[RMDB]
RNA sequence: GGGAACGACUCGAGUAGAGUCGAAAACUUUGUUCAGUUAAUGCACAUGUAGGACAUUGGGGCCCAAGCUGAAUGGAGAUAUUGAUUAAAAGUCCUAAAUAUUGCUUUUAAGUCUACAUUUCCUACAGACCUAAAUGAUAUUCGUAUCAUUUAGGUCAAAAGAAACAACAACAACAAC
Reactivity to DMS in 0.01 (KOAc 150mM, MgCl2 10mM, bicine 150mM(pH8.5), 24C), signal-to-noise 9, nucleotides 027 to 126: c020u000u000u000g020u010u000c020a040g010u000u000a140a150u010g000c100a070c080a050u000g010u010a100g010g020a300c030a060u000u010g020g000g010g010c020c070c040a100a110g000c040u010g000a040a040u000g000g000a020g000a080u000a080u010u000g000a090u000u000a020a020a020a030g010u010c220c170u010a060a070a120u010a140u010u000g010c010u000u000u000u000a010a040g010u010c020u000a070c150a090u000u000u000c000c010u010a090c230a130
Reactivity to 2A3 in 0.01 (KOAc 150mM, MgCl2 10mM, bicine 150mM(pH8.5), 24C), signal-to-noise 9, nucleotides 027 to 126: c010u040u020u030g010u020u010c020a020g010u060u080a120a050u170g040c020a020c010a050u070g070u120a110g080g180a040c010a070u070u120g120g000g190g000c020c010c010a020a020g000c010u020g010a020a020u040g060g020a010g000a010u100a060u150u080g020a020u040u060a030a020a010a010g030u070c000c020u050a030a070a040u240a080u100u150g000c000u060u030u010u010a060a070g050u040c010u030a060c030a120u010u030u020c010c000u030a060c030a050
Structure probing data (DMS and 2A3) for a 177-nucleotide construct. The DMS profile rests on 11,090 reads.